[RMDB]
RNA sequence: GGGAACGACUCGAGUAGAGUCGAAAAUCGAUGGCUUCGCGCUUGACGUCGGCUGGGUCGACGACACCGUGGUCGAAGGGAUCGUCGAUCGUGACUGCUUCACCGUCGGUGACCAGACCGGCACGACAAUGAGGGCUAGGUUCGCCUAGCCCUCAUUAAAAGAAACAACAACAACAAC
Reactivity to 2A3 in 0.01 (KOAc 150mM, MgCl2 10mM, bicine 150mM(pH8.5), 24C), signal-to-noise 2, nucleotides 027 to 126: u120c030g000a040u070g070g000c000u020u050c160g020c010g000c110u040u110g030a010c110g000u030c010g000g020c020u140g130g000g000u050c000g000a190c050g050a000c010a010c020c010g000u000g030g000u080c200g030a090a020g100g020g050a200u060c060g050u000c000g110a120u080c000g040u120g070a000c010u080g010c020u050u000c030a020c070c000g160u090c040g060g020u030g020a130c030c000a020g010a020c010c000g010g000c060a220c040g010a040c010
Reactivity to DMS in 0.01 (KOAc 150mM, MgCl2 10mM, bicine 150mM(pH8.5), 24C), signal-to-noise 2, nucleotides 027 to 126: u000c050g000a090u010g010g000c030u010u060c070g030c170g010c040u010u030g000a090c170g060u000c000g000g000c020u030g010g050g000u000c030g020a190c300g000a060c010a000c000c000g030u030g010g010u000c140g040a000a000g000g000g020a090u090c210g000u000c020g050a230u080c260g040u050g000a050c040u020g000c000u020u010c070a000c020c000g000u000c050g040g000u000g000a090c050c000a200g000a010c030c010g000g000c000a030c000g000a000c090